The data come from the RNA Mapping Database (RMDB), library RFM100. An RNA of 177 nucleotides, treated with DMS and 2A3 and read out base by base. Conditions: 150 mM KOAc, 10 mM MgCl2 and 150 mM bicine (pH 8.5), 24 C.
[RMDB]
RNA sequence: GGGAACGACUCGAGUAGAGUCGAAAAAGCAAGCUGAUGGUGCUUAGCCUAUCUAAGCCCCGUCCAAGACCGUAGGUGAAUAAGUUUUCUUAUUCUUAAUAAAAACCUACGUAGAUGGUGAACAGACUAGGGUACGUUUUUUCGAAAACGUACCCUAAAAAGAAACAACAACAACAAC
Reactivity to DMS in 0.01 (KOAc 150mM, MgCl2 10mM, bicine 150mM(pH8.5), 24C), signal-to-noise 1, nucleotides 027 to 126: a060g040c250a050a020g000c000u010g020a040u020g000g020u000g070c000u010u000a070g000c150c150u000a150u030c000u000a020a020g000c020c020c010c020g000u020c000c300a070a070g000a070c300c000g020u000a000g000g010u000g000a040a000u000a000a010g000u070u010u040u020c000u000u000a000u000u000c000u050u000a060a060u020a090a070a190a060a090c000c000u000a000c000g000u000a130g040a040u000g000g000u020g000a160a100c080a090g020a170c110
Reactivity to 2A3 in 0.01 (KOAc 150mM, MgCl2 10mM, bicine 150mM(pH8.5), 24C), signal-to-noise 2, nucleotides 027 to 126: a020g110c040a010a010g020c070u090g030a160u220g040g030u040g000c000u000u030a010g000c070c060u180a130u050c000u000a040a020g010c000c030c000c000g050u050c030c000a010a000g070a040c040c040g000u000a000g000g000u000g000a000a000u020a010a010g090u180u130u060u040c000u000u000a010u000u010c020u030u030a110a120u120a020a080a130a000a030c000c000u000a000c070g000u040a030g000a000u060g000g040u130g030a140a000c000a020g060a130c070
Values cover nucleotides 27 to 126.